[RMDB]
This 207-nucleotide RNA was probed chemically with DMS and 2A3. Reactivities are rounded to 0.1 and cut off at 0 and 3. Source: RMDB library M2RFPK, as collected in RNAgym. DMS adducts were read by reverse transcription with MarathonRT. The DMS profile rests on 5,425 reads. Conditions: 150 mM KOAc, 10 mM MgCl2 and 150 mM bicine (pH 8.5), 24 C.

RNA sequence: GGGAACGACUCGAGUAGAGUCGAAAAAUGGUAGUUAGUCUACUCGCUAUCCUAGUUACUUUGGAGUAAUCUAAAGUGUGUGUAAACGGGGGAAAGUCUGUAAAAUACUGGGGACAUAGGGUCAACAAGAACUAGUAGACCUUCGGGUCUACUAGAACCCAUAUAGUAGGUUCGCCUACUAUAUGGGAAAAGAAACAACAACAACAAC
Reactivity to DMS in 0.01 (KOAc 150mM, MgCl2 10mM, bicine 150mM(pH8.5), 24C), signal-to-noise 2, nucleotides 027 to 156: a100u000g010g000u000a040g010u000u010a080g020u000c010u000a030c030u000c060g010c040u000a050u020c020c040u010a090g020u000u010a010c030u010u010u000g000g010a050g000u000a120a150u000c040u000a030a020a050g010u010g010u000g000u010g050u010a070a050a070c070g010g020g040g000g020a100a030a100g000u000c050u000g000u000a050a070a080a150u000a080c080u010g020g020g020g000a110c060a080u010a080g000g010g020u000c060a040a080c070a050a080g000a110a080c010u000a010g020u000a030g000a030c000c010u040u040c300g080g020g020u000c010u000a010c000u010a000g000a030a040
Reactivity to 2A3 in 0.01 (KOAc 150mM, MgCl2 10mM, bicine 150mM(pH8.5), 24C), signal-to-noise 4, nucleotides 027 to 156: a010u080g020g020u020a030g020u070u070a040g040u050c020u050a050c000u040c030g010c010u040a050u140c010c000u030a060g030u060u080a020c030u040u040u040g050g010a030g010u070a120a110u020c020u050a030a020a040g010u000g000u010g000u000g040u130a080a130a130c070g010g000g000g000g030a050a030a020g040u050c050u060g050u060a040a080a030a010u120a070c040u030g000g040g000g010a010c000a060u090a060g050g000g000u030c010a020a010c010a060a060g080a080a000c010u000a000g010u000a000g000a000c010c000u020u040c110g090g000g000u000c000u000a000c000u000a000g000a000a000